[RMDB]
An RNA of 177 nucleotides, treated with 2A3 and DMS and read out base by base. The reactions ran in a buffer of 150 mM KOAc, 10 mM MgCl2 and 150 mM bicine (pH 8.5), at 24 C. 2A3 adducts were read by reverse transcription with SuperScript II with manganese. Source: RMDB library TTRDEL, as collected in RNAgym.
RNA sequence: GGGAACGACUCGAGUAGAGUCGAAAAGAUAUGGAGCAGCUUUUGACGCGAUUCGGGUCGGAAACGACCUCCUUUCGCGAUAAGCUGUCUCCUAAGUCAAAGGAACAGGUCUUCGGACCUGUUCCAAGAUGACAUCACGGUUCGCCGUGAUGUCAUCAAAAGAAACAACAACAACAAC
Reactivity to 2A3 in 0.01 (KOAc 150mM, MgCl2 10mM, bicine 150mM(pH8.5), 24C), signal-to-noise 2, nucleotides 027 to 126: g010a020u060a040u130g000g010a010g000c010a020g000c000u050u090u200u300g240a120c070g010c000g010a000u050u000c020g000g000g000u010c030g010g000a030a030a030c000g010a010c020c000u230c010c000u040u010u000c010g000c000g040a020u020a020a010g010c010u000g050u060c010u000c000c000u010a030a020g060u040c040a080a090a150g000g010a000a000c000a000g030g000u020c040u140u220c300g080g010a000c020c000u020g000u000u010c000c000a010a000
Reactivity to DMS in 0.01 (KOAc 150mM, MgCl2 10mM, bicine 150mM(pH8.5), 24C), signal-to-noise 2, nucleotides 027 to 126: g000a060u000a300u000g000g000a010g020c030a000g000c000u000u010u000u010g040a230c080g000c000g020a000u010u000c220g000g010g000u000c000g000g000a100a080a150c000g010a030c000c000u030c050c070u000u000u000c030g030c010g000a120u020a010a010g000c000u010g000u010c000u000c000c000u000a000a050g000u000c050a080a140a150g010g000a000a020c000a030g030g000u010c000u000u010c190g000g000a000c000c000u000g000u000u000c020c000a000a070